This 177-nucleotide RNA was probed chemically with DMS and 2A3. Reactivities are given for positions 27 through 126.
RNA sequence: GGGAACGACUCGAGUAGAGUCGAAAAGAGAUUUGGUAGAUGCUUAAUGAUGUAAAGGUUGCGUUGAAUUUUGAAUUGUUCUCUCAAGUUAGCAGGCAGGUGCACUUUUCUCUUUUACGAAGGACUUUUAGAACCUGAAAUUCGUUUCAGGUUCUAAAAAAGAAACAACAACAACAAC
Reactivity to DMS in 0.01 (KOAc 150mM, MgCl2 10mM, bicine 150mM(pH8.5), 24C), signal-to-noise 3, nucleotides 027 to 126: g000a080g000a020u010u010u000g000g010u000a070g010a090u000g000c040u000u010a070a100u000g000a040u030g020u000a060a080a060g000g000u000u000g000c130g020u000u010g000a100a090u020u010u050u000g010a070a070u030u010g010u010u010c020u000c010u000c080a060a080g010u040u000a100g020c040a030g000g000c030a040g030g000u010g020c070a030c040u010u010u000u000c000u010c010u000u010u010u000a080c100g010a100a120g020g010a090c120u000u000
Reactivity to 2A3 in 0.01 (KOAc 150mM, MgCl2 10mM, bicine 150mM(pH8.5), 24C), signal-to-noise 2, nucleotides 027 to 126: g060a000g010a010u120u060u040g040g020u080a050g000a070u040g040c020u060u060a170a000u160g070a010u080g090u130a020a000a080g090g000u000u000g000c020g070u020u070g040a060a040u090u050u070u110g100a110a100u030u060g030u030u030c020u000c000u000c000a020a080g080u050u050a030g070c010a000g100g000c030a030g060g000u090g020c040a060c020u050u010u050u000c010u000c000u060u040u020u000a030c010g000a080a020g100g040a040c010u000u000